Annotation: Chemical mapping of a 207-nucleotide RNA with 2A3 and DMS. The DMS profile rests on 2,851 reads. For 2A3, 2,520 sequencing reads were counted.

[RMDB]
RNA sequence: GGGAACGACUCGAGUAGAGUCGAAAACGACUGAAAUCGACGGCGUAAAAACUGAUAUGACCGCUGGAUUUACGCAGGUUAACGAAGCAAUCACAAACGAGAGCGAAGCGCGUGCAACUUCUGAGGCGGCGCUAGAGGCUAAGAUCGGCGAGAACUCAGGUAUAAUAUGAUUCGUCAUAUUAUACCUAAAAGAAACAACAACAACAAC
Reactivity to 2A3 in 0.01 (KOAc 150mM, MgCl2 10mM, bicine 150mM(pH8.5), 24C), signal-to-noise 3, nucleotides 027 to 156: c020g050a030c040u110g060a020a050a070u060c050g040a030c030g060g000c010g020u050a030a030a020a080a080c080u080g030a080u120a100u280g120a120c030c030g030c050u040g080g010a070u010u010u090a040c030g010c030a030g070g080u080u110a040a060c070g040a060a000g010c030a040a050u110c020a020c110a160a140a020c120g020a040g010a020g110c050g040a040a020g010c000g000c030g050u090g020c030a100a140c060u130u120c030u140g060a030g080g000c030g010g000c000g000c000u020a010g010a010g110g000c010u030a050a030g030a110u060c030g030g000c050g020a030g010a060a040c050u030c110
Reactivity to DMS in 0.01 (KOAc 150mM, MgCl2 10mM, bicine 150mM(pH8.5), 24C), signal-to-noise 2, nucleotides 027 to 156: c030g040a200c030u010g000a090a100a130u000c010g050a040c030g000g030c000g050u000a050a030a050a100a260c030u000g000a180u000a140u000g000a070c030c060g040c000u000g050g000a190u010u000u000a030c040g040c020a050g020g010u000u000a050a170c040g000a070a120g060c020a060a000u020c070a100c030a070a140a120c040g000a060g020a120g010c000g020a090a110g020c020g010c160g030u010g000c040a040a020c020u000u000c070u010g030a110g000g010c030g000g000c050g040c020u000a070g000a070g020g000c030u010a040a070g010a120u000c040g020g030c030g000a090g000a140a140c040u010c060